[RMDB]
RNA sequence: GGGAACGACUCGAGUAGAGUCGAAAACUGCUUGUGACGGUCUUGCUUCAGCUUAUAGGGCGAAUUCCUUUGAUGUACCUACAUUCUGCGCAAACCGUUCUGCAAUGUGUAAUUGGUGCUUGAUUAGAUACGCAAUAGUUCGCUAUUGCGAAAAGAAACAACAACAACAAC
Reactivity to DMS in 0.01 (KOAc 150mM, MgCl2 10mM, bicine 150mM(pH8.5), 24C), signal-to-noise 9, nucleotides 027 to 129: c060u040g020c080u030u030g040u010g030a000c000g000g060u000c170u040u000g000c000u050u080c040a000g030c020u020u030a060u000a040g000g010g040c070g040a090a110u020u020c090c150u020u040u060g030a080u060g030u020a000c010c010u030a010c080a010u010u000c050u000g010c300g030c030a020a020a010c020c040g000u030u020c040u000g030c000a000a000u010g000u040g030u060a100a060u000u000g000g000u020g020c060u020u020g000a120u030u030a080g030a130u030a160
Reactivity to 2A3 in 0.01 (KOAc 150mM, MgCl2 10mM, bicine 150mM(pH8.5), 24C), signal-to-noise 9, nucleotides 027 to 129: c020u030g020c020u060u100g050u090g040a010c000g000g010u000c080u110u010g000c000u140u180c010a000g000c000u020u020a020u020a050g010g020g010c050g090a130a140u170u190c070c000u150u070u290g150a150u190g040u120a220c000c000u010a010c010a040u020u000c000u010g000c020g000c000a000a000a000c000c000g010u020u010c000u010g000c000a030a090u110g040u020g030u120a110a140u060u090g030g000u010g020c080u060u050g050a110u150u150a080g040a090u160a120

An RNA of 170 nucleotides, treated with DMS and 2A3 and read out base by base.
Reactivities are given for positions 27 through 129.
For 2A3 the reverse transcriptase was SuperScript II with manganese.
The reactions ran in a buffer of 150 mM KOAc, 10 mM MgCl2 and 150 mM bicine (pH 8.5), at 24 C.